[RMDB]
The record gives the reactivity of an RNA of 177 nucleotides to 2A3 and DMS.
RNA sequence: GGGAACGACUCGAGUAGAGUCGAAAAGAGCGCAACACUUAGCCAGCAUAUACGCUAUGGAUUUCGAGUUGCAGACAAUACGUCUGUAAUUUGCAAGACGAGUCGUACUGGCUCUGAAGUUACCUACCAUCCAGGUUCCAUUCGUGGAACCUGGAUGAAAAGAAACAACAACAACAAC
Reactivity to 2A3 in 0.01 (KOAc 150mM, MgCl2 10mM, bicine 150mM(pH8.5), 24C), signal-to-noise 7, nucleotides 027 to 126: g080a010g020c090g010c070a030a060c020a020c050u020u040a010g000c000c010a010g050c060a070u100a040u020a230c020g000c020u050a140u210g060g000a050u040u000u010c010g000a000g010u000u000g010c010a000g000a000c030a050a270u270a300c160g010u000c000u000g000u010a000a010u010u010u000g010c050a000a010g020a030c040g010a010g040u230c010g000u040a020c000u020g000g000c010u000c020u040g080a110a020g010u010u050a040c000c000u030a060c030
Reactivity to DMS in 0.01 (KOAc 150mM, MgCl2 10mM, bicine 150mM(pH8.5), 24C), signal-to-noise 3, nucleotides 027 to 126: g000a080g010c120g030c130a040a060c020a180c010u000u010a000g020c030c050a000g000c300a140u030a190u000a050c010g030c010u000a040u020g030g000a130u000u030u010c020g000a010g020u000u020g000c000a030g000a000c000a120a150u030a120c240g010u000c000u030g010u000a000a000u000u000u000g000c100a000a020g000a140c000g000a020g040u090c010g020u000a010c000u000g000g000c000u000c010u000g030a060a110g000u000u000a100c000c000u040a110c160
Reactivities are given for positions 27 through 126.